RNA sequence: GGGAACGACUCGAGUAGAGUCGAAAAAAAACUAAGGGUGUAUUGCCUCAUGUGUCAGAUCCUAAAAUGCGUCGCUACUUUAUCGGAAUGAAGAACGCAAUCAAGAUCGUGCAGUACUCACAUCAUAUUGCUCAUCCGGUACGAGUCACACACCGACGCUACCGUAGUAUUUCGAUACUACGGUAGCAAAAGAAACAACAACAACAAC
Reactivity to DMS in 0.01 (KOAc 150mM, MgCl2 10mM, bicine 150mM(pH8.5), 24C), signal-to-noise 2, nucleotides 027 to 156: a060a020a000a060c030u020a040a050g040g000g050u000g040u000a100u000u000g040c020c010u000c040a110u000g010u000g020u000c050a160g000a040u000c000c010u000a040a020a060a100u000g040c040g000u000c040g020c080u010a060c010u000u010u000a070u000c060g050g050a130a100u000g010a070a040g020a070a110c020g010c030a100a080u010c070a080a040g030a030u000c100g000u000g000c060a080g010u000a080c090u000c060a080c090a080u000c040a110u000a050u000u000g010c010u000c040a140u000c010c010g010g020u030a050c070g020a130g000u000c040a060c030a060c080a070c040c010g010a170c100
Reactivity to 2A3 in 0.01 (KOAc 150mM, MgCl2 10mM, bicine 150mM(pH8.5), 24C), signal-to-noise 5, nucleotides 027 to 156: a000a000a000a000c080u120a100a060g040g030g000u060g030u130a150u140u260g060c030c010u090c050a060u120g050u010g060u080c030a040g030a120u060c050c050u110a100a110a030a070u130g030c050g050u100c030g000c030u020a020c020u040u110u040a030u030c020g030g000a130a150u070g020a030a110g060a140a030c080g000c000a000a030u070c110a070a080g000a030u040c090g010u040g000c030a080g120u090a090c050u020c050a010c000a020u020c010a020u040a030u220u020g000c000u010c030a020u020c020c000g000g010u010a030c050g000a000g020u010c000a010c000a000c000a020c050c000g030a020c060
The record gives the reactivity of an RNA of 207 nucleotides to DMS and 2A3. It was measured as part of the RMDB library OK3TST. Conditions: 150 mM KOAc, 10 mM MgCl2 and 150 mM bicine (pH 8.5), 24 C. Values are in units of 0.01, from 0 to 300, in steps of 10.